Chemical mapping of a 177-nucleotide RNA with DMS and 2A3. For DMS the reverse transcriptase was MarathonRT. The RNA was probed in 150 mM KOAc, 10 mM MgCl2 and 150 mM bicine (pH 8.5) at 24 C. Reactivities are given for positions 27 through 126. The DMS profile rests on 4,678 reads.
RNA sequence: GGGAACGACUCGAGUAGAGUCGAAAAGAGACGUUGUUCGCAACGUCUCGCAAUAUGCGGCGCACGCGCGCCGCACUGAGAUCGUCGGGAUCCAGACCGACAACACCCAAGAAUUCGUUCUUGGGAAAUUCGUUAUACCAUUCGUGGUAUAACGAAUAAAAGAAACAACAACAACAAC
Reactivity to DMS in 0.01 (KOAc 150mM, MgCl2 10mM, bicine 150mM(pH8.5), 24C), signal-to-noise 5, nucleotides 027 to 126: g000a000g010a020c000g010u000u000g020u000u020c210g010c010a000a020c000g010u000c000u000c000g000c140a050a100u010a100u000g030c020g050g050c030g090c010a040c300g010c260g040c030g080c010c010g070c000a000c070u010g000a150g010a100u010c140g000u000c020g000g010g000a070u010c020c030a140g020a050c000c000g010a000c000a140a130c250a200c000c000c000a000a010g000a040a030u000u010c210g010u000u000c000u000u000g000g000g000a020a030
Reactivity to 2A3 in 0.01 (KOAc 150mM, MgCl2 10mM, bicine 150mM(pH8.5), 24C), signal-to-noise 5, nucleotides 027 to 126: g010a000g010a000c010g000u010u020g020u050u080c200g030c100a020a000c000g000u000c010u010c010g000c000a060a130u190a070u190g010c010g020g010c010g010c080a070c170g280c020g000c020g020c090c000g030c010a000c030u100g060a080g060a140u140c080g020u010c010g010g020g000a030u020c030c010a030g070a070c000c010g040a000c000a000a060c050a050c010c000c000a010a010g010a010a030u110u110c200g070u090u000c040u000u010g000g000g000a100a010